[RMDB]
RNA sequence: GGGAACGACUCGAGUAGAGUCGAAAAAUGAGUCACCCCCGAGCAUUUGCAGUUUCAUUGCGUGGUCGACGCACUGUUGGUAAUGGUGUAUGCGAAAAGGUGUGUGGAUGUUUAUGACGGGUUGUUCGCAAUCUGAAAAGAAACAACAACAACAAC
Reactivity to 2A3 in 0.01 (KOAc 150mM, MgCl2 10mM, bicine 150mM(pH8.5), 24C), signal-to-noise 7, nucleotides 027 to 135: a000u090g000a010g020u020c010a040c010c000c000c000c010g030a010g010c020a050u020u010u110g000c010a020g050u000u020u080c030a040u020u070g010c020g020u030g040g080u090c030g030a020c020g000c000a010c020u020g040u070u050g070g030u120a030a050u050g020g020u020g010u010a030u080g030c030g060a030a020a010a030g040g000u030g000u010g010u010g050g040a080u030g040u020u050u010a050u040g030a010c000g000g000g010u000u000g000u000u000c040g000c030a000a020u020c010u030g050a070
Reactivity to DMS in 0.01 (KOAc 150mM, MgCl2 10mM, bicine 150mM(pH8.5), 24C), signal-to-noise 9, nucleotides 027 to 135: a060u020g000a050g000u000c030a100c000c010c000c020c000g010a090g010c050a050u010u000u010g010c050a050g010u010u010u010c040a060u010u010g010c040g020u000g000g010u010c060g000a060c070g000c030a040c060u010g010u010u010g010g010u020a060a050u010g000g010u000g010u000a060u010g010c030g000a040a040a070a080g000g010u000g010u000g010u000g000g010a060u000g000u000u000u000a040u010g010a230c070g000g000g000u000u000g000u000u020c080g010c050a050a060u000c050u000g000a080
Structure probing data (2A3 and DMS) for a 155-nucleotide construct. High 2A3 reactivity points to a flexible backbone, as in loops and unpaired stretches. For DMS the reverse transcriptase was MarathonRT. The reactions ran in a buffer of 150 mM KOAc, 10 mM MgCl2 and 150 mM bicine (pH 8.5), at 24 C.